[RMDB]
RNA sequence: GGGAACGACUCGAGUAGAGUCGAAAAGAAACGCAAGGCCGCUGACCGACGGGAUAUUGUGGGGCUUACCACAGCGGACGCGGCGUUAUCACUUGCCUUUUAAGCCGACCGUCUGGGCUGCAUACAAACCACCCAACUAUCUUCGGAUAGUUGGGAACUUGGAUACCAGGUUCGCCUGGUAUCCAAGAAAAGAAACAACAACAACAAC
Reactivity to 2A3 in 0.01 (KOAc 150mM, MgCl2 10mM, bicine 150mM(pH8.5), 24C), signal-to-noise 2, nucleotides 027 to 156: g040a000a070a000c050g010c030a030a010g040g000c040c000g010c030u100g050a120c010c000g050a040c050g040g010g130a080u160a170u300u100g010u070g000g050g010g070c080u070u110a040c000c010a020c010a000g000c000g000g000a000c000g000c000g010g020c000g010u050u030a120u100c040a000c160u040u040g000c010c040u090u100u010u050a080a030g040c000c000g010a060c000c000g040u040c000u080g010g000g080c000u040g000c000a060u130a090c070a010a030a050c020c000a020c030c000c000a000a000c000u000a000u000c010u020u050c080g080g000a000u010a000g000u000u000g000g000g010a000a000

Notes:
This 207-nucleotide RNA was probed chemically with 2A3. The reactions ran in a buffer of 150 mM KOAc, 10 mM MgCl2 and 150 mM bicine (pH 8.5), at 24 C.